[RMDB]
RNA sequence: GGGAACGACUCGAGUAGAGUCGAAAAAGGCAGCACCAUUUUUUCCAUUUUCAAUCGAGUGAGGUGACCCUGACAAAUGUAUGUGCCGUCGUCUAUGGUGUGAUCAGGUGUGCACGGACUUCCGUACGAUUGGCACGCGUUUAACGGUUGCACAGAAAGAAUUUGUAAAGUUCGCUUUACAAAUUCUAAAAGAAACAACAACAACAAC
Reactivity to DMS in 0.01 (KOAc 150mM, MgCl2 10mM, bicine 150mM(pH8.5), 24C), signal-to-noise 2, nucleotides 027 to 156: a040g010g030c030a060g000c040a290c040c030a040u010u010u000u000u010u000c040c020a150u000u000u000u000c060a100a120u000c050g010a110g030u000g010a100g030g020u000g010a110c000c020c020u020g000a080c070a060a050a100u000g030u010a060u020g060u010g040c000c000g050u000c020g000u000c080u000a080u010g030g020u010g020u010g010a060u020c020a090g020g030u010g050u010g020c050a120c040g000g000a110c060u000u000c060c010g040u010a030c000g020a100u010u000g050g010c000a050c020g020c030g000u000u000u000a050a120c070g030g020u000u010g000c010a040c080a110g010a090a100
Reactivity to 2A3 in 0.01 (KOAc 150mM, MgCl2 10mM, bicine 150mM(pH8.5), 24C), signal-to-noise 3, nucleotides 027 to 156: a000g020g000c020a010g030c020a040c030c020a120u020u020u040u050u100u080c090c040a110u120u090u070u180c110a120a120u080c050g050a020g030u090g030a070g030g050u040g030a060c010c000c010u030g010a040c050a030a090a020u100g030u110a080u140g000u030g000c010c000g010u020c000g000u000c030u070a100u150g060g030u050g020u020g050a080u060c030a020g070g020u070g040u040g040c020a010c030g030g020a090c010u120u010c040c000g040u030a000c010g040a070u100u190g000g000c000a010c020g020c010g020u010u050u090a100a020c030g030g000u030u030g040c070a020c010a040g110a060a150